[RMDB]
RNA sequence: GGGAACGACUCGAGUAGAGUCGAAAAUCCUAAGUCUUCCGUCCACACGUUUGACGAUGGGUUGUCAGCUACUCGGAAACGAGUAGCUUGGAUUUACCCAUCCGAGUGUGGAUACGGAAGAUAUGGAAAAAGAUGUUAACGUUCGCGUUAACAUCAACGUAAUUGUUACCUUCGGGUAACAAUUACGAAAAGAAACAACAACAACAAC
Reactivity to DMS in 0.01 (KOAc 150mM, MgCl2 10mM, bicine 150mM(pH8.5), 24C), signal-to-noise 3, nucleotides 027 to 156: u000c010c000u010a080a250g010u000c000u000u000c010c000g040u000c000c000a030c000a010c000g020u010u010u010g000a150c230g010a020u000g030g020g030u000u010g010u000c010a060g020c000u000a000c000u010c010g030g000a160a170a300c010g010a030g020u000a000g010c010u000u000g020g000a040u000u010u010a010c000c000c010a020u010c010c010g010a110g010u000g040u000g000g000a020u000a010c030g070g020a040a020g020a020u000a080u000g020g000a060a080a100a210a120g010a030u000g010u010u010a010a010c010g020u000u000c300g020c010g010u000u000a020a020c000a020u000c000a100a140
Reactivity to 2A3 in 0.01 (KOAc 150mM, MgCl2 10mM, bicine 150mM(pH8.5), 24C), signal-to-noise 6, nucleotides 027 to 156: u020c010c000u030a110a020g030u000c000u010u000c000c000g020u010c010c000a000c000a020c040g100u110u210u240g110a100c070g000a010u010g000g000g010u020u020g000u010c000a000g000c010u000a000c000u000c000g030g040a080a110a070c010g010a000g000u000a000g000c000u000u100g010g010a000u110u080u250a030c000c000c000a000u010c000c010g030a020g000u000g000u000g000g000a000u010a010c000g010g000a000a000g000a000u020a040u020g020g070a060a060a030a030a060g010a000u010g000u000u000a000a000c010g010u030u050c300g000c010g080u010u010a000a000c000a000u000c000a000a010